[RMDB]
RNA sequence: GGGAACGACUCGAGUAGAGUCGAAAAGAAAAGAGAGCAACGGGGCUAGCUGCCGGGUGUUCCACCUACGGGAACGGUGCCGAGUGAGGCUUAUCCCGGGGGGUAGCGCUCCGUGCCCUUCCAUAGCUGACAAACGCGUUCGCGCGUUUGAAAAGAAACAACAACAACAAC
Reactivity to 2A3 in 0.01 (KOAc 150mM, MgCl2 10mM, bicine 150mM(pH8.5), 24C), signal-to-noise 4, nucleotides 027 to 129: g100a020a100a000a000g110a000g010a010g040c040a080a190c000g000g000g000g040c010u000a080g010c020u030g000c000c000g000g020g020u110g080u090u040c020c010a010c030c030u080a080c030g000g000g000a040a070c110g090g140u170g020c000c020g020a020g080u280g070a060g000g020c000u010u100a150u060c000c000c000g000g000g000g000g000g000u000a000g040c040g000c020u000c010c000g010u010g000c000c010c010u060u000c020c010a150u110a070g050c020u060g020a030
Reactivity to DMS in 0.01 (KOAc 150mM, MgCl2 10mM, bicine 150mM(pH8.5), 24C), signal-to-noise 5, nucleotides 027 to 129: g000a080a090a090a080g030a000g000a090g020c020a080a070c040g030g010g010g070c030u030a070g070c000u000g080c000c000g000g050g040u040g030u080u030c000c000a120c000c050u020a010c040g000g000g000a060a060c190g020g050u040g000c010c020g030a110g060u070g010a060g010g030c030u040u050a120u020c020c020c030g000g000g000g000g000g000u000a040g000c000g000c040u040c040c000g000u040g010c010c000c020u040u010c000c040a140u050a090g000c070u040g010a220